The record gives the reactivity of an RNA of 207 nucleotides to 2A3.
The data come from the RNA Mapping Database (RMDB), library OK3TST.
Values cover nucleotides 27 to 156.
2A3 adducts were read by reverse transcription with SuperScript II with manganese.
RNA sequence: GGGAACGACUCGAGUAGAGUCGAAAAGCAAAAUGCGCUGGCCGGACAGCAGGCCGUAUUACAUGGCGACUAUUACGGCUUUCAGAACUCCCCCGAUUACGCGUACGCGUUGCAGCAGGGGUUGCAGGGCGUGGAUCGCAGCGCCGCCGCACGUGGAACUUUUUCGUGAAUUCGUUCACGAAAAAGUAAAAGAAACAACAACAACAAC
Reactivity to 2A3 in 0.01 (KOAc 150mM, MgCl2 10mM, bicine 150mM(pH8.5), 24C), signal-to-noise 1, nucleotides 027 to 156: g110c040a030a180a120a010u080g080c040g000c040u090g000g050c040c000g050g040a130c050a010g010c020a030g060g000c000c000g010u030a030u040u070a060c110a100u080g030g000c030g010a060c020u020a020u130u060a020c050g020g000c060u000u140u080c100a080g040a110a120c020u140c000c000c000c000c000g010a000u000u210a030c040g020c000g050u020a080c030g000c150g060u020u050g020c030a050g010c030a070g050g000g050g050u000u030g000c000a000g000g010g000c030g010u030g040g040a040u060c050g000c000a000g020c020g030c000c010g000c000c020g000c000a020c000g020u050g060g100a010